Conditions: 150 mM KOAc, 10 mM MgCl2 and 150 mM bicine (pH 8.5), 24 C. An RNA of 177 nucleotides, treated with DMS and 2A3 and read out base by base. For DMS the reverse transcriptase was MarathonRT.
RNA sequence: GGGAACGACUCGAGUAGAGUCGAAAAACGCUCCACAGGACACACGAAGCAGGGUCCUUUCGCAUUCGGCUUCAGUUGCAUUGGGCCAUUUAAACCGGCAACAUUGGCUUGGGAACACAAAUGCCUGACGAUAGGUACCAUUCGUGGUACCUAUCGUAAAAGAAACAACAACAACAAC
Reactivity to DMS in 0.01 (KOAc 150mM, MgCl2 10mM, bicine 150mM(pH8.5), 24C), signal-to-noise 3, nucleotides 027 to 126: a110c130g010c070u010c020c030a080c070a050g000g040a120c050a020c150a070c110g000a030a030g040c040a100g010g010g020u000c050c070u030u000u040c150g000c100a060u020u000c050g000g000c030u010u010c040a090g020u030u000g000c030a140u000u040g000g030g000c010c010a110u010u050u030a010a090a180c050c020g000g010c020a110a130c050a110u010u010g010g020c030u000u020g000g000g000a110a030c110a080c170a020a050a030u050g000c020c020u000g000
Reactivity to 2A3 in 0.01 (KOAc 150mM, MgCl2 10mM, bicine 150mM(pH8.5), 24C), signal-to-noise 5, nucleotides 027 to 126: a000c050g020c030u050c020c000a080c010a050g040g030a030c010a000c010a000c170g050a080a010g040c030a050g050g040g000u030c020c000u050u060u040c070g000c040a030u090u070c050g030g010c050u120u120c070a070g010u040u030g030c020a050u050u180g010g020g030c070c030a030u080u110u070a080a050a040c000c000g020g000c000a000a050c030a160u050u130g030g000c010u040u110g040g000g030a100a010c060a000c020a110a090a060u080g020c020c020u030g050

For DMS, 4,069 sequencing reads were counted. Reactivities are rounded to 0.1 and cut off at 0 and 3.